[RMDB]
This 307-nucleotide RNA was probed chemically with 2A3 and DMS.
Conditions: 150 mM KOAc, 10 mM MgCl2 and 150 mM bicine (pH 8.5), 24 C.
It was measured as part of the RMDB library POS240.
The 2A3 profile rests on 7,355 reads.
DMS adducts were read by reverse transcription with MarathonRT.
RNA sequence: GGGAACGACUCGAGUAGAGUCGAAAACUCACGGUCUUCGGACCGUGAGACCUUGCGUUCGCGCAAGGAACAAGUACUACGGUACUUGAAGUAUCCACUUCGGUGGAUACAACGUACGCUACGGCGUACGAAGGAACGUGCUACGGCACGUUCCAACUUACGGUCGUGAGACCGUAAGACAGAACCUCGUGAGAGGUUCUGACUAGCCACGUUCGCGUGGCUAGAAUUUAAAUGGGCAAGCGGCACCGUCCGCCAAAACAAACGGUAAUUGCCUCUUCGGAGGCAAUAAAAGAAACAACAACAACAAC
Reactivity to 2A3 in 0.01 (KOAc 150mM, MgCl2 10mM, bicine 150mM(pH8.5), 24C), signal-to-noise 4, nucleotides 027 to 266: c000u000c000a010c000g000g010u030c010u030u120c220g150g010a000c000c000g000u000g000a010g000a000c000c000u010u010g000c000g030u030u070c220g000c000g000c100a000a000g000g010a000a040c010a000a000g010u010a000c020u020a010c180g140g000u010a000c000u020u020g010a110a010g000u000a000u000c000c000a010c010u040u070c290g120g000u010g000g000a000u000a000c000a010a000c000g000u000a000c010g000c010u020a030c270g130g000c000g000u000a000c000g020a050a070g000g000a000a000c000g000u000g000c010u020a080c290g120g000c000a000c000g000u000u000c000c000a000a000c000u000u000a000c000g000g010u000c020g040u040g090a050g000a020c000c000g000u000a000a000g000a000c000a000g000a000a000c000c000u010c020g040u080g060a110g000a000g020g000u000u000c000u000g000a000c000u000a000g010c010c000a010c000g030u060u040c200g040c000g100u020g000g000c000u000a000g010a000a000u110u120u080a100a090a070u190g050g100g060c150a120a060g020c030g000g010c030a030c050c020g190u240c020c030g020c010c030a020a040a020a020c030a010a000a010c000g030g030u050a010
Reactivity to DMS in 0.01 (KOAc 150mM, MgCl2 10mM, bicine 150mM(pH8.5), 24C), signal-to-noise 2, nucleotides 027 to 266: c010u000c000a010c000g000g010u010c010u000u020c180g020g010a010c000c000g020u000g000a000g000a050c010c000u000u000g000c000g010u000u020c210g040c010g030c020a010a010g010g010a220a220c010a010a020g000u010a010c000u010a120c160g020g010u000a000c000u000u000g000a210a170g000u000a010u000c000c000a000c000u000u030c170g030g000u000g000g000a000u000a000c020a160a160c000g020u040a010c020g000c000u000a090c210g020g010c010g010u000a000c000g010a140a120g020g020a000a000c000g020u000g000c000u020a120c270g020g020c000a000c000g010u000u000c000c000a010a070c010u000u000a000c000g010g000u000c000g000u020g000a300g000a010c000c000g010u000a000a000g010a180c010a010g000a010a000c000c000u000c010g000u020g000a160g010a010g000g000u000u000c000u010g010a240c000u000a010g020c040c020a010c000g000u010u050c210g020c010g050u000g010g030c000u000a000g010a050a050u030u020u010a050a110a130u010g010g010g010c130a110a160g000c010g000g000c000a130c000c010g000u000c000c000g020c000c140a100a090a010a160c060a000a010a000c000g000g030u010a100